[RMDB]
RNA sequence: GGGAACGACUCGAGUAGAGUCGAAAACAUACUCAUGGGAUCCUAGGUAGGAUCACGUACGUCCAUGACUCACAUGCGCCAUGGUACGACCAUGUACGUACUACACAUACUAGACUACAUCUGUAUCUGUCUCGGGAUACUUCGGUAUCCCGAGACAAAAAGAAACAACAACAACAAC
Reactivity to DMS in 0.01 (KOAc 150mM, MgCl2 10mM, bicine 150mM(pH8.5), 24C), signal-to-noise 2, nucleotides 027 to 126: c140a070u000a010c100u000c090a050u030g000g000g010a050u000c030c000u030a090g000g000u000a000g010g000a030u000c070a070c100g010u000a020c050g000u000c010c010a020u010g000a000c070u010c130a140c210a070u020g010c070g040c140c050a070u000g000g000u010a050c040g010a210c110c130a060u000g000u000a030c020g010u010a070c010u000a090c160a030c140a100u010a300c070u010a080g020a050c010u000a050c100a140u000c060u000g010u000a030u010c110
Reactivity to 2A3 in 0.01 (KOAc 150mM, MgCl2 10mM, bicine 150mM(pH8.5), 24C), signal-to-noise 1, nucleotides 027 to 126: c010a080u120a050c010u090c040a090u070g110g080g000a020u060c030c000u050a090g000g300u180a020g000g040a010u030c020a010c030g020u010a020c030g030u000c030c000a020u030g010a010c010u020c050a090c040a070u100g040c030g070c180c000a040u060g030g020u150a030c050g040a020c000c050a020u060g000u000a000c000g010u010a040c030u060a010c070a000c000a040u170a050c020u100a010g070a100c070u140a070c090a070u040c030u120g060u040a050u000c040